[RMDB]
RNA sequence: GGGAACGACUCGAGUAGAGUCGAAAAGCUCUGAGAGACAGAUCGAACAACAAAGAGAGAUUGAAAAUCUUAGGGGAGAGAACGAAUCUGUCGUCUUCUCUAGGACAUUGUCGAUCAGAUGUCCAAAGACCAAACAUAGGUUCGCCUAUGUUUGGUCAAAAGAAACAACAACAACAAC
Reactivity to DMS in 0.01 (KOAc 150mM, MgCl2 10mM, bicine 150mM(pH8.5), 24C), signal-to-noise 3, nucleotides 027 to 126: g050c080u000c020u010g040a060g000a280g000a000c020a070g000a000u010c030g010a300a280c060a050a140c160a060a060a070g010a030g000a300g000a100u030u000g000a050a080a090a150u020c000u000u010a020g010g000g020g000a020g040a120g010a010a030c020g000a100a130u050c120u050g010u000c000g000u000c000u000u000c000u000c000u010a020g000g000a000c160a060u000u020g010u020c000g000a140u020c000a020g020a020u040g010u030c010c040a090a150a040
Reactivity to 2A3 in 0.01 (KOAc 150mM, MgCl2 10mM, bicine 150mM(pH8.5), 24C), signal-to-noise 6, nucleotides 027 to 126: g000c000u000c000u010g020a010g000a000g000a020c010a010g020a030u010c030g060a070a060c040a110a030c060a040a300a010g130a030g010a010g010a020u000u010g030a040a050a010a050u000c000u000u000a000g000g000g010g000a000g000a000g040a080a030c030g020a070a120u130c120u230g110u040c030g130u000c000u010u010c000u000c000u000a010g010g000a030c040a050u050u080g000u000c000g010a000u000c000a000g020a030u120g050u000c000c000a040a020a040

About this RNA
Source: RMDB library OK1LIB, as collected in RNAgym. Chemical mapping of a 177-nucleotide RNA with DMS and 2A3. The reactions ran in a buffer of 150 mM KOAc, 10 mM MgCl2 and 150 mM bicine (pH 8.5), at 24 C. DMS adducts were read by reverse transcription with MarathonRT.